RNA sequence: GGGAACGACUCGAGUAGAGUCGAAAAGAAAGAAAGAAGCGAACUGGCGCAGCCGCACGGGCAACCGUCAAUCCAGCACUUCACAAGUCUUGUCGUUCUGACAGGACAUCCAUCAACCCACCGGGAAAAAAGGACUACAGCUUCGGCUGUAGUCCAACUUCUUCUCGAAGUUCGCUUCGAGAAGAAGAAAAGAAACAACAACAACAAC
Reactivity to 2A3 in 0.01 (KOAc 150mM, MgCl2 10mM, bicine 150mM(pH8.5), 24C), signal-to-noise 1, nucleotides 027 to 156: g020a000a080a010g050a010a100a000g010a060a010g010c010g020a000a020c010u010g030g000c010g010c030a010g040c030c070g060c070a090c140g070g000g000c060a060a030c020c000g010u050c010a010a070u080c030c030a000g040c070a030c010u060u000c040a040c070a300a000g000u020c010u010u020g000u010c020g140u200u140c120u170g000a000c000a010g000g010a000c000a010u000c000c000a020u090c050a090a160c040c000c050a020c110c100g000g070g000a000a070a000a070a000a020g010g000a020c000u010a130c000a010g050c000u040u120c140g150g000c000u000g000u010a000g000u010c000c000a000a000
Record summary:
Structure probing data (2A3) for a 207-nucleotide construct. The RNA was probed in 150 mM KOAc, 10 mM MgCl2 and 150 mM bicine (pH 8.5) at 24 C. Values cover nucleotides 27 to 156. For 2A3 the reverse transcriptase was SuperScript II with manganese. The data come from the RNA Mapping Database (RMDB), library M2RFPK.